[RMDB]
RNA sequence: GGGAACGACUCGAGUAGAGUCGAAAAAACCCGUUGAUUGAAAUUGAACCGUCCUGUUAUCGAAAGAUAGGCAGAAGAUACGUAAUGUGUGACAGCAUGGGAAGUAAAGGCAGACCGUGGUUCCCUUAAAAUCGUCGAAUCUUCGGAUUCGACGAAACACAUAGGCAAUGUUCGCAUUGCCUAUGUGAAAAGAAACAACAACAACAAC
Reactivity to 2A3 in 0.01 (KOAc 150mM, MgCl2 10mM, bicine 150mM(pH8.5), 24C), signal-to-noise 2, nucleotides 027 to 156: a000a000c020c000c000g020u110u070g110a300u040u020g050a050a130a080u050u120g020a060a090c030c030g030u040c020c010u000g040u100u020a020u030c050g020a150a060a000g020a010u100a070g050g000c010a000g060a130a000g020a070u120a080c030g010u070a030a130u110g070u010g050u030g040a040c030a000g050c010a070u050g030g030g010a040a040g050u050a070a100a030g010g040c030a020g010a050c020c030g000u050g050g020u000u040c020c000c000u010u050a040a130a070a070u020c000g000u000c000g010a000a020u010c010u000u040c180g100g000a000u010u000c000g000a000c010g000a000a000a000
Reactivity to DMS in 0.01 (KOAc 150mM, MgCl2 10mM, bicine 150mM(pH8.5), 24C), signal-to-noise 2, nucleotides 027 to 156: a090a070c010c000c000g010u000u010g000a130u010u020g000a060a090a090u000u010g010a080a110c040c030g010u000c010c010u010g010u000u010a060u000c030g020a190a110a230g000a050u000a030g020g020c020a060g000a060a070g010a110u010a050c090g000u030a060a100u000g050u000g030u010g010a090c070a090g020c050a070u000g000g020g000a110a100g020u010a050a030a090g020g000c020a060g010a080c010c040g020u010g030g020u000u000c000c000c020u000u000a010a070a120a130u000c010g030u000c010g020a020a000u000c000u010u010c300g020g010a040u000u000c000g000a010c010g010a010a030a070
The record gives the reactivity of an RNA of 207 nucleotides to 2A3 and DMS. The reactions ran in a buffer of 150 mM KOAc, 10 mM MgCl2 and 150 mM bicine (pH 8.5), at 24 C. DMS (dimethyl sulfate) methylates the pairing face of unpaired adenines and cytosines.